[RMDB]
RNA sequence: GGGAACGACUCGAGUAGAGUCGAAAAGAAAUAAAUGGCUUCGUUACGUGAGCGCAAGAAGCACCGAAUGACGAAAGUCAGCUAUAAAAUUAGCUCAGAAGCGCAGAAAGAAUGCCUAAGGUGCGAAGGGAAUUCUAUAGUUCGCUAUAGAAUUCCCAAAAGAAACAACAACAACAAC
Reactivity to DMS in 0.01 (KOAc 150mM, MgCl2 10mM, bicine 150mM(pH8.5), 24C), signal-to-noise 3, nucleotides 027 to 126: g030a090a040a080u030a020a100a090u010g020g020c000u000u000c000g020u020u010a120c190g040u020g010a040g010c040g000c180a050a080g000a130a210g030c010a030c020c000g000a150a090u000g000a010c000g000a160a080a140g010u010c000a030g000c110u000a030u010a030a080a110a100u000u030a020g040c000u010c030a080g010a060a060g000c050g010c030a060g020a160a110a160g010a080a040u050g000c030c000u030a090a070g020g000u000g010c000g000a160a090
Reactivity to 2A3 in 0.01 (KOAc 150mM, MgCl2 10mM, bicine 150mM(pH8.5), 24C), signal-to-noise 3, nucleotides 027 to 126: g060a000a150a010u210a000a080a060u080g010g030c000u010u000c030g000u010u040a160c070g100u170g080a030g000c030g000c060a050a080g170a130a010g040c020a000c000c000g030a050a020u100g020a000c000g030a070a010a010g030u020c010a010g080c050u020a020u050a090a120a050a140u150u040a000g000c000u000c050a050g060a170a020g030c030g010c090a000g100a000a130a000g090a030a030u100g020c000c000u030a040a020g000g000u030g000c050g030a090a120